RNA sequence: GGGAACGACUCGAGUAGAGUCGAAAAGAGGCGAAAUAAUUCCCAUCUCCUGUGUACGGCCGGAGAUGGGUAUGGCCGUACUAAUAAGCCUCAUAGUGACGAGAGUCACGAAUUCUGGAUAGCCUGUGGUAGUCGGCUAUCCUAUGACUACCGUAGACGGUAAAUAAUCAUUCGUGAUUAUUUACCGAAAAGAAACAACAACAACAAC
Reactivity to DMS in 0.01 (KOAc 150mM, MgCl2 10mM, bicine 150mM(pH8.5), 24C), signal-to-noise 3, nucleotides 027 to 156: g000a080g030g000c030g020a120a110a110u010a080a160u000u000c000c000c020a070u000c020u000c030c010u010g060u010g030u010a100c000g030g010c000c020g040g010a030g000a040u000g010g020g060u000a010u010g000g040c050c040g010u000a210c070u000a100a100u000a080a230g010c010c010u000c000a150u000a220g020u000g010a030c030g020a300g000a300g000u020c000a020c010g010a100a090u010u000c090u000g010g000a150u000a070g030c000c010u000g000u000g000g030u010a050g050u000c140g020g000c060u010a090u000c050c020u000a030u000g020a050c030u000a030c020c010g000u000a120g040a200
Reactivity to 2A3 in 0.01 (KOAc 150mM, MgCl2 10mM, bicine 150mM(pH8.5), 24C), signal-to-noise 5, nucleotides 027 to 156: g010a010g000g000c020g060a100a040a040u190a040a080u140u060c010c000c000a010u010c020u000c000c010u040g000u020g010u090a060c070g070g000c030c020g010g000a010g000a010u010g010g000g000u010a000u040g020g000c030c010g010u000a010c010u020a010a120u070a100a020g000c000c000u010c010a070u100a040g010u000g010a000c020g010a010g010a010g130u010c010a010c010g010a020a030u180u040c050u070g020g000a020u000a010g010c020c020u070g030u060g070g120u070a060g080u100c020g000g010c000u010a010u010c000c000u020a080u060g030a020c020u050a070c030c010g030u020a060g050a120
Description: The data come from the RNA Mapping Database (RMDB), library OK3TST. This 207-nucleotide RNA was probed chemically with DMS and 2A3. Values are in units of 0.01, from 0 to 300, in steps of 10.